The record gives the reactivity of an RNA of 177 nucleotides to 2A3 and DMS. For 2A3 the reverse transcriptase was SuperScript II with manganese. For DMS, 1,287 sequencing reads were counted.

[RMDB]
RNA sequence: GGGAACGACUCGAGUAGAGUCGAAAAUGUCUGGUCGCCGACGUUGACGUUGGUAGCGCCCACGAAUUCGCCGCAGGAGAGCUUCGCGUUUCCUGCCCAACUGCAGGGGGAGUUGGGCGGACACGGACGAAUCUCGGCAAUUCGUUGCCGAGAUUCGAAAAGAAACAACAACAACAAC
Reactivity to 2A3 in 0.01 (KOAc 150mM, MgCl2 10mM, bicine 150mM(pH8.5), 24C), signal-to-noise 1, nucleotides 027 to 126: u160g030u060c030u080g050g030u040c010g040c040c020g050a010c000g040u040u290g110a160c020g030u020u030g070g040u100a070g000c030g000c030c020c010a030c030g050a010a060u050u020c070g050c040c020g010c080a020g100g110a030g040a020g070c090u040u030c090g010c000g090u080u010u020c020c040u140g000c040c000c000a060a030c000u120g090c230a300g030g000g000g000g040a010g010u000u000g020g000g000c000g000g000a010c010a000c050g010g050a010
Reactivity to DMS in 0.01 (KOAc 150mM, MgCl2 10mM, bicine 150mM(pH8.5), 24C), signal-to-noise 1, nucleotides 027 to 126: u010g020u020c020u010g000g010u000c060g010c020c030g020a040c020g000u010u000g010a110c080g010u000u000g020g040u020a050g050c060g020c030c000c150a090c030g010a060a030u000u030c150g000c010c020g020c180a040g000g000a060g000a270g010c110u000u000c040g020c020g010u000u000u010c000c000u010g060c010c000c020a000a010c020u000g040c090a280g000g010g000g010g040a040g000u000u010g000g000g020c000g020g000a000c080a030c010g010g010a060
Background: DMS adducts were read by reverse transcription with MarathonRT.